[RMDB]
RNA sequence: GGGAACGACUCGAGUAGAGUCGAAAAGUGAUAUUGGAUAGCAGAUUGAGGUGUCACGGUCUCUGUUAUUUAGUAUCGGUACGCAGGUAGUAUUAGAUUGUGAUACCUCAAGUACUAUCAGCGUAUAGUAACUCGUAGAAUUCGUUCUAUGAGUUACAAAAGAAACAACAACAACAAC
Reactivity to 2A3 in 0.01 (KOAc 150mM, MgCl2 10mM, bicine 150mM(pH8.5), 24C), signal-to-noise 3, nucleotides 027 to 126: g060u000g070a050u040a090u010u190g070g000a000u010a010g030c060a040g040a270u020u020g010a010g050g000u010g020u030c010a000c020g030g010u020c030u000c000u010g050u020u030a140u070u140u100a130g050u050a080u190c000g000g000u010a020c030g000c070a010g000g110u160a040g030u010a300u260u140a060g030a020u010u040g000u000g020a010u020a010c000c000u000c000a000a000g000u010a010c000u000a000u010c020a030g040c040g020u070a020u050a160